Conditions: 150 mM KOAc, 10 mM MgCl2 and 150 mM bicine (pH 8.5), 24 C. Structure probing data (2A3 and DMS) for a 177-nucleotide construct. The 2A3 profile rests on 1,916 reads. The data come from the RNA Mapping Database (RMDB), library OK1LIB.
RNA sequence: GGGAACGACUCGAGUAGAGUCGAAAAUUUAUUAUUAAAAUUACAACGUGAAAGAGGGAUUACGUUCCUAUUUAUAGCUCAUGAUCUAUCAAUGGUGAAGUAUAUUUCAGAUCGUAUUGCAGUCAUGGACGUUAAGUUUUUUCGAAAACUUAACGUCAAAAGAAACAACAACAACAAC
Reactivity to 2A3 in 0.01 (KOAc 150mM, MgCl2 10mM, bicine 150mM(pH8.5), 24C), signal-to-noise 3, nucleotides 027 to 126: u040u020u040a070u060u110a070u170u170a240a090a070a080u190u110a100c010a070a000c050g060u070g040a090a110a090g050a110g000g080g010a050u100u140a030c060g030u050u030c000c000u030a070u020u020u030a070u040a010g010c050u030c130a070u140g000a080u050c010u000a020u010c050a030a020u010g030g000u090g040a060a010g050u050a080u020a030u190u120u040c080a060g020a070u050c030g040u030a090u040u180g010c060a030g020u060c020a040u070g080
Reactivity to DMS in 0.01 (KOAc 150mM, MgCl2 10mM, bicine 150mM(pH8.5), 24C), signal-to-noise 1, nucleotides 027 to 126: u000u000u000a060u070u130a300u040u030a040a040a010a040u000u010a220c070a120a100c000g000u000g000a010a160a160g000a030g010g000g060a140u030u020a110c060g010u000u000c000c000u000a060u020u000u060a070u020a080g030c210u080c010a040u010g010a010u000c040u020a060u020c000a020a020u000g000g010u020g040a060a060g000u000a050u010a010u030u060u000c000a020g010a040u000c030g020u010a020u000u000g050c220a030g010u010c040a040u000g000